Structure probing data (2A3 and DMS) for a 177-nucleotide construct.
RNA sequence: GGGAACGACUCGAGUAGAGUCGAAAAGAUAUGGACGUGACAAGGGAGCGUAUACAUCGGAAACGAUGUAUGACGCGAGGAUCUUGCACGUCCUAAGUCAAAAUCUGCCUGCUUCGGCAGGCAGAAACAUGAUAAACGCGUUCGCGCGUUUAUCAUGAAAAGAAACAACAACAACAAC
Reactivity to 2A3 in 0.01 (KOAc 150mM, MgCl2 10mM, bicine 150mM(pH8.5), 24C), signal-to-noise 1, nucleotides 027 to 126: g010a000u000a010u040g000g000a000c000g000u020g030a220c010a020a010g020g010g020a090g000c010g010u010a000u010a000c000a010u010c000g030g000a000a010a010c010g000a010u000g030u000a010u030g040a010c010g010c010g010a090g010g030a000u000c010u010u000g000c010a000c000g000u000c000c000u010a000a000g010u000c010a020a000a000a300u040c010u010g010c010c000u010g000c010u060u050c120g180g020c000a010g000g000c010a000g010a000a000a000
Reactivity to DMS in 0.01 (KOAc 150mM, MgCl2 10mM, bicine 150mM(pH8.5), 24C), signal-to-noise 2, nucleotides 027 to 126: g000a010u000a040u010g000g000a000c010g020u000g000a240c000a020a000g000g000g010a010g020c000g100u000a010u000a010c020a010u010c010g020g000a000a000a020c000g030a000u000g010u010a010u000g000a010c010g030c000g020a060g030g000a020u000c010u000u000g000c010a010c000g010u010c000c000u000a000a030g010u010c000a140a060a120a140u000c000u010g000c000c000u000g000c020u000u000c300g040g000c000a000g000g000c010a000g000a010a060a190